This 177-nucleotide RNA was probed chemically with 2A3.
Source: RMDB library OK1LIB, as collected in RNAgym.
The reactions ran in a buffer of 150 mM KOAc, 10 mM MgCl2 and 150 mM bicine (pH 8.5), at 24 C.
Reactivities are given for positions 27 through 126.
For 2A3, 593 sequencing reads were counted.
[RMDB]
RNA sequence: GGGAACGACUCGAGUAGAGUCGAAAAUAAAACCAUCGAGCUCUAAUGAGUUCGAUGGAGCAUGAAUGUCUCCUGAAUAUGACAUCAUGCAAAUCAGGAGGUGUCGAGGAAAACUCGACGCCAAAAACGAUUAUCCAGCCUUCGGGCUGGAUAAUCGAAAAGAAACAACAACAACAAC
Reactivity to 2A3 in 0.01 (KOAc 150mM, MgCl2 10mM, bicine 150mM(pH8.5), 24C), signal-to-noise 2, nucleotides 027 to 126: u140a000a030a000a010c000c000a000u000c000g010a000g000c000u020c000u270a300a240u300g000a000g000u020u020c000g010a000u060g000g000a020g000c000a000u020g140a160a060u000g000u000c010u030c000c000u070g150a160a160u300a210u280g000a000c000a000u030c000a000u000g000c010a010a010a010u200c080a090g100g080a060g010g000u000g010u010c000g030a000g040g060a000a000a000a300c000u000c010g000a000c000g000c020c000a000a000a000a000a000